[RMDB]
RNA sequence: GGGAACGACUCGAGUAGAGUCGAAAAGCUUGCUGAAUCUCAACUUGGCCCAAGUGGUCAAGGCGUCUGCGGUCGGGUGUCCGACAUGCAAGGGCCUGGGCACUGUCGGUGACAGCGAGGUCGGUCAGAAAGACGGAACAUUCGUGUUCCGUCUUUCAAAAGAAACAACAACAACAAC
Reactivity to 2A3 in 0.01 (KOAc 150mM, MgCl2 10mM, bicine 150mM(pH8.5), 24C), signal-to-noise 2, nucleotides 027 to 126: g030c040u060u050g000c000u040g040a110a100u040c010u000c060a050a110c010u070u110g020g030c000c050c020a100a030g060u070g120g300u030c040a110a130g000g000c000g030u000c020u030g030c020g020g000u000c040g020g000g090u300g130u160c000c010g000a020c020a110u110g000c010a040a010g020g000g020c010c000u010g000g020g030c040a000c030u040g080u110c050g010g010u050g060a040c000a010g010c000g020a010g020g020u040c030g000g030u060c040a020
Reactivity to DMS in 0.01 (KOAc 150mM, MgCl2 10mM, bicine 150mM(pH8.5), 24C), signal-to-noise 2, nucleotides 027 to 126: g010c070u000u010g010c000u010g010a170a070u010c030u010c040a080a160c110u000u010g010g020c000c030c040a120a110g020u010g030g000u000c010a040a030g010g010c000g010u020c010u010g020c010g000g000u010c000g010g000g030u010g010u030c010c010g000a000c010a030u010g010c000a040a020g000g000g010c000c000u000g010g000g000c000a050c000u000g000u010c170g000g010u000g000a150c060a040g010c160g000a030g000g000u010c020g000g000u010c190a120